[RMDB]
Structure probing data (2A3 and DMS) for a 177-nucleotide construct. Source: RMDB library OK2TST, as collected in RNAgym. Reactivities are rounded to 0.1 and cut off at 0 and 3. For DMS the reverse transcriptase was MarathonRT.
RNA sequence: GGGAACGACUCGAGUAGAGUCGAAAAAGGUAUAACAGGUAUACUGAAGAUCGCGAGCAGAUUGGGCGUCAACUAGCAGCCGAACAUGGUUUUGCAUUGAUUCCGCCCUACGAUCAUCCUGAUGUUACCUAUAAAUGCCCUUCGGGGCAUUUAUAGGAAAAGAAACAACAACAACAAC
Reactivity to 2A3 in 0.01 (KOAc 150mM, MgCl2 10mM, bicine 150mM(pH8.5), 24C), signal-to-noise 2, nucleotides 027 to 126: a000g080g000u080a080u030a070a060c060a000g080g070u040a030u020a090c050u060g060a060a030g000a010u000c010g000c100g080a120g110c090a040g060a200u120u180g010g000g000c040g000u000c020a020a020c050u070a070g000c010a000g010c010c010g040a140a090c090a120u120g000g060u130u170u190u090g000c020a030u000u010g040a030u220u020c070c010g010c040c000c000u010a000c000g010a000u020c000a040u000c030c030u020g010a040u060g040u110u040a070
Reactivity to DMS in 0.01 (KOAc 150mM, MgCl2 10mM, bicine 150mM(pH8.5), 24C), signal-to-noise 3, nucleotides 027 to 126: a160g010g000u010a020u010a050a170c090a070g010g000u000a080u010a040c080u000g000a100a120g020a030u000c020g010c200g000a070g020c110a120g000a170u020u010g030g010g020c030g000u000c030a020a020c200u010a140g010c010a020g010c000c010g010a040a200c200a130u010g020g010u000u000u030u000g030c000a240u010u000g000a070u010u010c190c060g020c000c010c000u010a020c040g010a010u000c010a090u000c020c000u020g010a100u000g010u000u000a040